[RMDB]
RNA sequence: GGGAACGACUCGAGUAGAGUCGAAAAUCUAUUUUACUAAUGAGCCUGCAUUUAUUAUGCAUGUUUCUUGGUACAUUAUGUUCGGGCCUAUCGUUCCCAUAUGGAUGACCUGCGUCUAUACAGUUGCGAACAGGGUGGUUCGCCACCCUGAAAAGAAACAACAACAACAAC
Reactivity to DMS in 0.01 (KOAc 150mM, MgCl2 10mM, bicine 150mM(pH8.5), 24C), signal-to-noise 2, nucleotides 027 to 129: u050c140u000a050u030u000u000u000a090c080u030a000a040u070g020a060g030c050c000u000g040c020a000u020u050u000a100u050u030a040u030g000c070a000u040g020u030u030u000c080u000u060g030g050u000a000c300a050u020u030a000u040g020u000u000c000g010g020g050c110c030u000a090u020c060g030u000u000c010c000c000a120u000a060u020g040g010a070u010g020a110c060c060u050g010c090g020u000c050u000a050u040a090c220a140g010u000u000g030c050g010a100a090
Reactivity to 2A3 in 0.01 (KOAc 150mM, MgCl2 10mM, bicine 150mM(pH8.5), 24C), signal-to-noise 6, nucleotides 027 to 129: u030c000u030a120u040u100u020u040a010c020u010a000a070u160g000a000g020c010c040u000g000c020a000u010u080u120a270u300u140a020u100g000c000a010u060g030u010u160u060c000u000u010g000g000u040a040c040a080u020u150a060u190g070u010u000c030g050g190g150c010c010u070a080u100c030g000u000u000c000c000c000a010u050a040u080g030g000a010u040g070a050c020c090u050g070c060g020u000c030u050a030u020a040c060a040g020u040u050g100c040g000a050a000

The record gives the reactivity of an RNA of 170 nucleotides to DMS and 2A3. The RNA was probed in 150 mM KOAc, 10 mM MgCl2 and 150 mM bicine (pH 8.5) at 24 C. The DMS profile rests on 10,953 reads. The 2A3 profile rests on 8,784 reads. For DMS the reverse transcriptase was MarathonRT.